[RMDB]
RNA sequence: GGGAACGACUCGAGUAGAGUCGAAAAAACUCCAAAUAGGCACUAUAUAGGUUAUUAUCCCCAGUUUCACGGAGGAGGAAACAGAGGUACAAAGAAGUUAAGUAAGAACCUGUCCAGAGUGACACAGCUAAUAAUCAGAGUAGUUGAAACUCACAUCCGGUUCACUGAAUUUCGAUUCAGUGAACCGAAAAGAAACAACAACAACAAC
Reactivity to 2A3 in 0.01 (KOAc 150mM, MgCl2 10mM, bicine 150mM(pH8.5), 24C), signal-to-noise 1, nucleotides 027 to 156: a000a000c120u090c010c050a060a090a020u110a070g000g030c110a020c150u010a050u010a020u080a210g010g020u070u100a200u080u030a080u170c040c020c000c000a010g000u000u000u000c080a050c050g030g020a000g000g010a000g020g030a010a010a010c040a000g030a040g060g000u010a060c010a070a090a050g120a110a000g110u050u090a200a020g040u030a030a010g000a070a030c010c040u040g000u030c000c130a030g010a040g180u020g010a030c020a000c000a070g000c000u000a030a020u120a030a000u260c030a010g010a010g070u040a010g010u010u020g050a150a000a000c020u050c120a040c020a030u110c040
The data come from the RNA Mapping Database (RMDB), library OK3TST. This 207-nucleotide RNA was probed chemically with 2A3. The 2A3 profile rests on 467 reads. 2A3 adducts were read by reverse transcription with SuperScript II with manganese.